This 177-nucleotide RNA was probed chemically with DMS.
RNA sequence: GGGAACGACUCGAGUAGAGUCGAAAAGACAUUCUGGCCUAUGGAACGGCGAAAGCUGCCCUCAACCAGAUGAUGGUUUCGCUGGCUCAUAUGCUGGCAAAGAAGGUGCGCAUCAAUUCCGUGCUGAUGGAUGACGCAGUUUCGACUGCGUCAUCCAAAAAGAAACAACAACAACAAC
Reactivity to DMS in 0.01 (KOAc 150mM, MgCl2 10mM, bicine 150mM(pH8.5), 24C), signal-to-noise 1, nucleotides 027 to 126: g000a250c040a190u020u020c020u010g020g010c070c040u010a120u000g000g000a060a200c080g010g020c040g010a070a070a120g020c000u000g000c100c000c070u010c240a080a150c040c020a050g000a110u010g050a120u000g000g010u000u000u000c110g000c000u000g000g000c010u000c280a050u010a060u020g020c010u000g000g040c010a050a010a070g030a100a080g000g050u000g000c050g020c140a050u000c060a060a160u000u000c160c000g020u000g000c090u010g010a280